RNA sequence: GGGAACGACUCGAGUAGAGUCGAAAAAAAAGAUAUGGAUCCUGAGAGCGAAGAACACAUAUGUAAACUGUAUCGGAAACGAUACAGGAAGAAGUAUGUGGGAGCUCUACAGGAUCCUAAGUCAAAACUAUCGUGUAAAGUUCGCUUUACACGAUAGAAAAGAAACAACAACAACAAC
Reactivity to 2A3 in 0.01 (KOAc 150mM, MgCl2 10mM, bicine 150mM(pH8.5), 24C), signal-to-noise 1, nucleotides 027 to 126: a000a000a000a020g050a020u040a030u060g000g000a000u020c000c010u000g010a010g000a000g010c000g120a300a030g000a040a000c030a000c010a010u010a000u100g000u020a000a000a000c010u000g000u000a010u000c000g010g000a010a000a000c000g000a000u010a000c000a010g010g000a020a140g010a000a000g010u000a000u000g000u000g000g030g000a010g020c000u000c000u040a120c000a000g040g000a000u000c000c000u000a000a000g010u000c000a010a000a060a120
Reactivity to DMS in 0.01 (KOAc 150mM, MgCl2 10mM, bicine 150mM(pH8.5), 24C), signal-to-noise 3, nucleotides 027 to 126: a070a060a100a130g000a000u000a090u000g000g000a000u000c000c000u010g000a150g010a020g020c000g000a120a150g010a090a160c010a010c000a010u000a010u010g020u000a020a140a300c000u000g000u000a010u000c000g000g020a030a020a060c000g020a020u000a010c000a020g000g040a010a040g020a070a300g000u000a000u000g010u000g000g010g000a020g020c000u000c000u000a060c010a010g010g000a000u000c000c000u000a000a040g000u010c000a060a040a090a120
The record gives the reactivity of an RNA of 177 nucleotides to 2A3 and DMS. Values cover nucleotides 27 to 126. The 2A3 profile rests on 5,286 reads. The reactions ran in a buffer of 150 mM KOAc, 10 mM MgCl2 and 150 mM bicine (pH 8.5), at 24 C.